Structure probing data (DMS and 2A3) for a 207-nucleotide construct. The 2A3 profile rests on 2,084 reads. Conditions: 150 mM KOAc, 10 mM MgCl2 and 150 mM bicine (pH 8.5), 24 C. It was measured as part of the RMDB library M2RFPK.
RNA sequence: GGGAACGACUCGAGUAGAGUCGAAAAGAGUCAUACAACCCCAGAAACCAUUCCUUAUACCUUGAGUAUUGCUGAAUUCAGUUUAGCGUGCAUGCUCUUGGGUAUUCUCAUAGUGAUUGUCAAAUUUAAAACGACGAUGACUUCGGUCAUCGUCGAAUCGUAGAUGUAGGUUCGCCUACAUCUACGAAAAAGAAACAACAACAACAAC
Reactivity to DMS in 0.01 (KOAc 150mM, MgCl2 10mM, bicine 150mM(pH8.5), 24C), signal-to-noise 2, nucleotides 027 to 156: g030a080g000u010c030a100u010a110c050a060a150c020c010c000c050a240g010a170a130a100c050c030a140u000u000c020c030u010u000a170u000a140c010c080u000u000g000a020g050u000a030u010u000g000c000u000g010a050a110u010u000c190a230g000u000u000u010a050g010c050g020u000g040c160a130u000g000c030u010c010u000u000g000g020g020u000a040u000u000c030u000c060a170u000a080g010u000g010a110u000u000g000u000c040a040a100a210u000u000u010a070a060a110a160c010g010a030c000g040a010u000g000a030c000u000u010c300g000g000u000c010a010u000c000g020u000c010g000a000a020
Reactivity to 2A3 in 0.01 (KOAc 150mM, MgCl2 10mM, bicine 150mM(pH8.5), 24C), signal-to-noise 4, nucleotides 027 to 156: g050a010g030u070c050a020u110a210c050a130a190c020c020c020c010a020g110a050a080a020c060c020a080u040u070c010c010u070u040a030u020a090c000c010u020u030g000a000g010u020a050u140u160g000c020u030g030a130a130u210u130c040a140g140u050u080u130a090g040c070g010u060g030c020a020u020g000c000u000c000u030u030g020g000g010u000a040u050u040c070u000c050a070u060a050g090u070g090a130u030u070g030u080c060a070a030a120u060u160u240a130a130a020a010c010g000a000c010g000a000u000g000a000c000u000u030c180g040g000u010c000a010u000c000g010u000c000g000a000a000